[RMDB]
RNA sequence: GGGAACGACUCGAGUAGAGUCGAAAAGAUAUGGAUUGACACUGACAUGCUUGGAGUGUCGGAAACGACAUGGAAGAGCAACAGCAGUGAUUCAAUCCUAAGUCAAACCCCUGCUUCGGCAGGGGAACAUCAGGUAAAGGUUCGCCUUUACCUGAUGAAAAGAAACAACAACAACAAC
Reactivity to 2A3 in 0.01 (KOAc 150mM, MgCl2 10mM, bicine 150mM(pH8.5), 24C), signal-to-noise 7, nucleotides 027 to 126: g050a010u100a050u220g010g010a000u010u000g010a000c000a000c030u040g210a120c050a150u140g000c010u020u020g020g050a060g020u000g000u000c000g000g000a070a080a000c010g020a000c000a000u040g120g230a070a050g010a030g000c020a020a010c040a030g090c000a000g000u020g080a160u080u040c000a000a000u000c000c000u010a110a020g060u010c040a060a020a300c000c000c000c000u000g000c000u050u090c300g220g000c000a000g010g000g000g000a000a030
Reactivity to DMS in 0.01 (KOAc 150mM, MgCl2 10mM, bicine 150mM(pH8.5), 24C), signal-to-noise 9, nucleotides 027 to 126: g020a050u000a300u000g000g010a010u000u000g010a030c000a000c000u000g000a080c120a270u000g010c000u010u000g000g010a300g010u000g000u000c000g000g000a100a100a200c000g000a010c010a000u000g000g020a300a150g000a000g000c000a030a070c300a160g000c000a000g010u000g000a150u020u000c000a010a020u000c000c000u000a020a100g010u000c030a080a160a190c000c000c000c000u000g010c010u000u000c260g020g010c000a010g000g000g000g000a010a040